[RMDB]
Annotation:
This 207-nucleotide RNA was probed chemically with DMS and 2A3. DMS (dimethyl sulfate) methylates the pairing face of unpaired adenines and cytosines. It was measured as part of the RMDB library OK3TST. Conditions: 150 mM KOAc, 10 mM MgCl2 and 150 mM bicine (pH 8.5), 24 C. Reactivities are given for positions 27 through 156. 2A3 adducts were read by reverse transcription with SuperScript II with manganese.

RNA sequence: GGGAACGACUCGAGUAGAGUCGAAAAGGAGCUCGGGAUGCUCUAAAUCCUUGGAAGAGCAUCCGUACGCUCUUCCAUACCACCAGAGCGUAUUGAAGUGUUGGUGGUUUUGAGACACUUCAGUGAGGGCUCAAAAGGACAUUGCUCUUACCGAGCAGUUUUAUCAUAUGUUCGCAUAUGAUAAAACAAAAGAAACAACAACAACAAC
Reactivity to DMS in 0.01 (KOAc 150mM, MgCl2 10mM, bicine 150mM(pH8.5), 24C), signal-to-noise 3, nucleotides 027 to 156: g010g030a080g020c010u000c050g020g010g000a080u000g000c020u000c010u010a040a090a110u010c030c050u000u000g010g010a110a050g000a040g010c000a070u000c030c170g030u000a040c180g000c000u000c000u000u000c020c020a150u010a120c070c060a100c070c080a100g000a030g040c010g040u000a080u000u010g020a060a080g010u000g010u000u000g030g010u010g020g020u000u000u010u000g000a280g000a030c030a020c000u000u000c040a080g030u010g010a090g020g000g020c020u000c020a030a040a110a090g010g010a090c100a100u000u000g020c010u000c020u000u000a130c080c060g010a070g030c040a100
Reactivity to 2A3 in 0.01 (KOAc 150mM, MgCl2 10mM, bicine 150mM(pH8.5), 24C), signal-to-noise 4, nucleotides 027 to 156: g090g010a040g000c020u030c050g060g010g000a020u030g000c000u020c000u010a100a090a040u090c020c030u030u060g070g040a060a010g000a000g000c010a030u030c040c050g010u020a010c050g000c000u000c000u000u000c000c000a020u050a050c000c060a020c010c040a010g010a000g010c020g010u040a060u050u060g020a030a010g000u020g030u060u040g040g080u070g070g000u080u020u070u070g020a010g000a000c010a020c020u030u010c020a020g010u040g120a080g020g070g000c000u000c020a050a070a000a020g050g000a040c050a090u090u110g000c000u000c000u040u100a090c030c070g000a000g000c010a000